[RMDB]
RNA sequence: GGGAACGACUCGAGUAGAGUCGAAAAGUCUUUGUACACAUCCAAUCUCCGCACCUUGGAGACGGCCCCGUGUCGCCUUGUUCACACUUGAGAGCACCGGGUCCCUUCUUGGUCGCUUCGUCAUUCUUUGCGUUACACUUGUUCACACCUCGAACGAAAUCUCACUUGGGUUCGCCCAAGUGAGAUUAAAAGAAACAACAACAACAAC
Reactivity to 2A3 in 0.01 (KOAc 150mM, MgCl2 10mM, bicine 150mM(pH8.5), 24C), signal-to-noise 1, nucleotides 027 to 156: g010u050c010u060u280u130g110u200a000c060a020c020a110u020c030c060a120a080u090c090u030c030c040g050c000a010c020c020u000u030g020g040a010g030a040c020g000g000c000c000c000c000g000u060g000u100c100g070c120c040u070u040g050u180u210c050a070c040a040c150u080u110g040a010g000a000g220c000a010c010c000g010g000g010u020c000c000c000u040u010c000u010u000g060g000u000c050g020c000u170u140c030g090u010c020a040u140u020c020u110u120u100g050c020g040u010u110a070c060a060c070u130u200g050u100u110c040a010c020a040c010c010u180c050g060a110a040c050g080a030
Background: Conditions: 150 mM KOAc, 10 mM MgCl2 and 150 mM bicine (pH 8.5), 24 C. The record gives the reactivity of an RNA of 207 nucleotides to 2A3. For 2A3, 477 sequencing reads were counted.